[RMDB]
RNA sequence: GGGAACGACUCGAGUAGAGUCGAAAACGGAAUUAAUUGACCCGACAACACACUGUGCUUUCGCCUCUCCCCUCGCUGCAAAGUCAAAUGUGGAAGGAGACCGGGAAAAAGUGAAGCAAGUGUGUGCAGCAGUAUAAUAUUUCGAUAUUAUACUGCUAAAAGAAACAACAACAACAAC
Reactivity to 2A3 in 0.01 (KOAc 150mM, MgCl2 10mM, bicine 150mM(pH8.5), 24C), signal-to-noise 9, nucleotides 027 to 126: c050g080g090a070a100u190u140a100a100u140u190g110a120c000c010c010g050a050c050a150a000c000a000c010a000c000u060g040u060g300c010u060u170u170c010g010c010c000u040c010u020c020c010c000c000u010c020g050c010u030g010c030a090a080a070g090u230c070a050a100a150u100g010u020g030g040a070a100g150g010a020g010a050c120c160g010g000g000a030a070a010a020a030g110u110g010a000a000g000c000a020a000g000u000g000u000g010u020g010c020
Reactivity to DMS in 0.01 (KOAc 150mM, MgCl2 10mM, bicine 150mM(pH8.5), 24C), signal-to-noise 8, nucleotides 027 to 126: c150g010g010a110a090u030u030a090a100u020u020g000a120c020c000c000g000a140c250a090a040c010a010c000a010c000u000g010u010g000c000u010u020u000c020g010c010c020u020c300u010c000c000c000c010u000c040g010c020u000g010c020a010a080a120g020u040c300a060a100a080u010g010u010g000g000a140a070g020g000a030g000a170c180c200g000g010g000a030a030a130a170a080g010u010g000a020a010g000c010a050a020g010u000g010u000g010u000g010c160
An RNA of 177 nucleotides, treated with 2A3 and DMS and read out base by base.
In probing experiments dimethyl sulfate is read out at A N1 and C N3, which are open when not base-paired.
It was measured as part of the RMDB library OK1LIB.
The reactions ran in a buffer of 150 mM KOAc, 10 mM MgCl2 and 150 mM bicine (pH 8.5), at 24 C.
Values cover nucleotides 27 to 126.
For 2A3, 31,748 sequencing reads were counted.
Reactivities are rounded to 0.1 and cut off at 0 and 3.